[RMDB]
RNA sequence: GGGAACGACUCGAGUAGAGUCGAAAAAGAAAGACAUCGCAGCUGCGAAAGAGGACGCGUAGGAUCCGAAAUACUCGAAGCAGCUAACCGGAAAACGGAAGGAUCCAUCCCAAAGCGAUCAAAAAAAGAAUCGAAGAUAGUUCGCUAUCUUCGAUUCAAAAGAAACAACAACAACAAC
Reactivity to DMS in 0.01 (KOAc 150mM, MgCl2 10mM, bicine 150mM(pH8.5), 24C), signal-to-noise 2, nucleotides 027 to 126: a060g000a070a070a140g000a130c200a030u000c010g000c020a120g020c010u000g000c020g000a100a100a160g000a020g040g000a070c120g000c040g000u020a090g010g020a040u010c040c000g020a080a020a090u030a300c000u000c020g000a110a180g000c030a010g030c010u080a070a060c020c000g010g010a100a050a120a100c060g000g010a060a080g000g000a020u000c010c010a170u000c000c010c010a060a050a080g000c060g000a040u000c080a020a010a020a090a060a140a080
Reactivity to 2A3 in 0.01 (KOAc 150mM, MgCl2 10mM, bicine 150mM(pH8.5), 24C), signal-to-noise 2, nucleotides 027 to 126: a000g070a030a050a010g080a030c070a080u040c020g030c050a020g000c000u050g040c030g030a140a050a020g030a020g000g020a010c070g010c000g040u020a070g000g050a010u000c010c020g040a000a020a110u210a060c000u000c000g060a050a010g000c010a000g000c020u000a000a020c000c000g080g020a100a230a110a130c000g020g020a010a040g040g020a020u000c000c000a040u000c000c020c000a070a070a000g040c060g060a060u170c130a040a150a040a000a000a000a010

Chemical mapping of a 177-nucleotide RNA with DMS and 2A3. DMS adducts were read by reverse transcription with MarathonRT. The reactions ran in a buffer of 150 mM KOAc, 10 mM MgCl2 and 150 mM bicine (pH 8.5), at 24 C. 2A3 adducts were read by reverse transcription with SuperScript II with manganese.